[RMDB]
RNA sequence: GGGAACGACUCGAGUAGAGUCGAAAAUAGGUUAAAUUUAAAGGUAACAGCUUACAAAGGUGACUAAAAUACAGUCUGUGCCUUCAAAGAGCUCACAAUCUCUAGAGGAGAACAAAGGAUGAUGUGGCAAAUGUCCCGGGAACAUAGAGGGAGAGUACAAUACGGGAUACUUCGGUAUCCCGUAUUGAAAAGAAACAACAACAACAAC
Reactivity to 2A3 in 0.01 (KOAc 150mM, MgCl2 10mM, bicine 150mM(pH8.5), 24C), signal-to-noise 2, nucleotides 027 to 156: u090a020g020g030u040u020a040a090a100u100u050u190a120a080a050g030g000u020a150a000c020a050g020c010u100u050a060c120a000a160a010g000g040u110g070a060c090u160a100a030a000a100u190a040c030a030g040u090c010u020g090u120g030c010c000u050u030c020a020a090a020g060a030g020c000u020c040a020c010a030a090u010c020u000c000u040a010g010a010g090g030a030g000a070a020c060a100a110a000g090g000a010u050g000a020u070g040u040g040g020c000a040a050a050u100g010u020c000c050c000g010g040g000a050a020c020a080u070a030g020a030g040g040g000a030g020a010g010u060a030
Reactivity to DMS in 0.01 (KOAc 150mM, MgCl2 10mM, bicine 150mM(pH8.5), 24C), signal-to-noise 1, nucleotides 027 to 156: u000a030g020g010u000u000a020a040a110u010u000u000a030a080a060g030g010u010a030a040c020a060g000c090u020u000a140c090a060a130a070g060g040u040g000a210c010u010a030a040a130a080u000a140c080a060g000u010c010u000g000u000g000c000c000u010u000c040a010a040a120g000a060g000c090u010c040a060c090a060a050u010c010u000c040u010a110g040a140g000g010a110g090a110a070c070a090a130a130g000g010a070u010g000a150u010g020u000g020g050c040a020a040a110u010g000u010c000c020c000g000g000g010a040a030c040a080u010a060g010a060g030g000g000a100g000a090g040u000a090
Notes
Chemical mapping of a 207-nucleotide RNA with 2A3 and DMS. The reactions ran in a buffer of 150 mM KOAc, 10 mM MgCl2 and 150 mM bicine (pH 8.5), at 24 C. For 2A3 the reverse transcriptase was SuperScript II with manganese. The data come from the RNA Mapping Database (RMDB), library OK3TST. For DMS the reverse transcriptase was MarathonRT.